The record gives the reactivity of an RNA of 177 nucleotides to 2A3 and DMS. The reactions ran in a buffer of 150 mM KOAc, 10 mM MgCl2 and 150 mM bicine (pH 8.5), at 24 C. For 2A3, 4,617 sequencing reads were counted.
[RMDB]
RNA sequence: GGGAACGACUCGAGUAGAGUCGAAAACGAGGAGGGGAUUGUCAAGGCGGUUGUGUAUGCUAGUAUCUCGAGCAGGCCAAGUAGGCUCUACGAGCAGGACCGAGUGAGGGGCUACGCCUUCUGUGCAGUUACAGCUAGAUUUCGAUCUAGCUGUAACAAAAGAAACAACAACAACAAC
Reactivity to 2A3 in 0.01 (KOAc 150mM, MgCl2 10mM, bicine 150mM(pH8.5), 24C), signal-to-noise 4, nucleotides 027 to 126: c050g020a050g030g020a080g010g040g020g000a060u080u150g080u090c040a030a030g050g000c030g010g060u120u120g030u050g020u070a080u180g030c010u020a010g040u080a150u050c060u020c050g020a040g000c020a040g030g020c020c020a090a050g090u090a060g070g000c010u030c000u070a040c030g000a010g030c020a040g030g070a010c030c030g010a030g020u080g040a040g000g000g010g010c000u060a040c040g010c020c020u150u020c050u060g140u110g050c040a060
Reactivity to DMS in 0.01 (KOAc 150mM, MgCl2 10mM, bicine 150mM(pH8.5), 24C), signal-to-noise 7, nucleotides 027 to 126: c120g000a110g010g010a120g000g010g010g010a090u010u010g010u000c100a060a080g010g020c050g000g010u010u010g010u000g010u010a070u010g020c050u010a080g000u000a110u010c070u000c050g010a090g010c070a100g010g010c030c050a060a110g010u010a110g010g000c020u000c040u000a070c070g000a090g020c110a080g000g000a090c080c040g010a080g010u010g010a090g000g000g000g000c050u010a060c130g010c030c010u000u000c070u010g010u010g020c140a160